[RMDB]
RNA sequence: GGGAACGACUCGAGUAGAGUCGAAAAAUACAGGUGAUGGCAUGGGAUCAUGAGAAAGAUGAAAUUGUUACUUUGAUUGAUUCCAAGCAAGAUAGUCUUUUUGAUCUCAAAUGUAAGAUGCAGGAAAUCGGUGAUGAGUAUUCGUACUCAUCACCGAAAAAGAAACAACAACAACAAC
Reactivity to DMS in 0.01 (KOAc 150mM, MgCl2 10mM, bicine 150mM(pH8.5), 24C), signal-to-noise 2, nucleotides 027 to 126: a070u000a040c020a040g020g010u010g000a160u010g000g000c090a160u010g000g050g000a020u000c000a030u010g000a300g010a030a010a020g000a170u000g080a110a140a170u010u010g010u000u000a060c040u000u000u000g000a220u000u000g000a010u000u000c000c030a050a100g030c030a050a050g010a050u000a100g030u000c020u000u000u000u010u000g010a140u010c010u000c010a050a080a090u010g000u000a070a080g020a110u000g000c030a050g000g000a070a020a130

Structure probing data (DMS) for a 177-nucleotide construct. Conditions: 150 mM KOAc, 10 mM MgCl2 and 150 mM bicine (pH 8.5), 24 C.